[RMDB]
RNA sequence: GGGAACGACUCGAGUAGAGUCGAAAAUAUGACAACCUCUCUGGUUCUUAUUUGCUCAUCUUUAAAUGACACUAAUAUUAACUAACUCAAAAUAAUGUUCUGAAGAUUGCAUGAGCUAAUGCAUGAGGAAUACUUAGAUACAAGGCAAUAAAUGGGAGUUCCCUCUGAUGUUCGCAUCAGAGGGAACAAAAGAAACAACAACAACAAC
Reactivity to 2A3 in 0.01 (KOAc 150mM, MgCl2 10mM, bicine 150mM(pH8.5), 24C), signal-to-noise 1, nucleotides 027 to 156: u290a110u100g050a030c070a090a070c080c040u080c030u030c030u050g000g010u010u050c090u060u190a090u040u020u050g070c020u020c000a080u020c000u000u140u030a110a140a180u100g000a000c000a060c080u080a140a120u110a080u300u150a060a020c010u030a050a000c000u040c200a090a150a000a000u120a150a000u140g040u100u040c070u030g050a050a050g050a110u080u090g020c030a030u030g030a030g010c070u090a010a010u090g050c130a040u060g020a000g000g020a000a000u030a040c020u030u000a020g000a030u030a070c060a040a080g080g030c020a110a000u060a220a080a040u230g040g000g000a070